RNA sequence: GGGAACGACUCGAGUAGAGUCGAAAAGCAACUUAGGAUUUUAGGCUCCCCGUGCGUGUCUCGAACCAUGCCGGGCCAAACCCACGAGGGCUGGCGGUCCCCGUGCGGUCAAAAUCAAACCGCUGGAAAAACAGUUCUAGCUUCGGCUAGAACUGAAGAAUAACUUCUCGUUCGCGAGAAGUUAUUCAAAAGAAACAACAACAACAAC
Reactivity to 2A3 in 0.01 (KOAc 150mM, MgCl2 10mM, bicine 150mM(pH8.5), 24C), signal-to-noise 3, nucleotides 027 to 156: g000c000a010a150c060u130u140a180g020g090a210u180u080u060u140a080g020g040c030u100c030c010c010c010g030u160g030c010g020u020g020u020c090u070c300g060a060a030c030c000a010u050g000c000c010g000g000g030c020c010a060a010a010c000c010c000a000c010g010a300g000g030g000c000u000g000g000c000g000g000u010c000c000c000c000g000u010g010c110g000g030u020c050a020a050a050a170u080c060a140a070a020c010c000g000c020u030g100g010a090a100a020a010a000c000a010g000u000u000c000u000a000g000c000u050u050c190g070g000c010u010a000g010a000a000c000u000g000a000a000